[RMDB]
RNA sequence: GGGAACGACUCGAGUAGAGUCGAAAAGUCAUGCCUUCGGGCAUGACAGGUACCGAGAGGUACCAAAUAGCGUACAGCAGACGCAGACUGUACGCUAAAAAAGUGUGUGUUCAAUAAGUGCCAAUUGAACACACACUAAAAUGGCGCAAGUGUGUGAUGGCGAUUUAAAUUUCGAUUUAAAUCGCCAAAAAGAAACAACAACAACAAC
Reactivity to 2A3 in 0.01 (KOAc 150mM, MgCl2 10mM, bicine 150mM(pH8.5), 24C), signal-to-noise 1, nucleotides 027 to 156: g000u000c000a000u000g000c000c000u010u100c250g070g030g020c000a000u000g010a000c000a000g070g010u000a000c000c000g020a020g000a010g060g000u000a000c000c000a000a000a070u050a000g000c000g010u000a000c000a000g030c060a030g120a120c050g000c110a000g040a050c020u000g000u000a000c000g000c010u020a110a050a000a000a000a020g010u000g000u000g000u000g010u000u010c000a000a000u110a240a050g070u060g200c070c000a020a000u000u000g000a000a000c000a000c000a000c000a000c000u000a000a000a000a000u080g030g030c010g020c180a120a080g100u040g000u010g000u010g050a050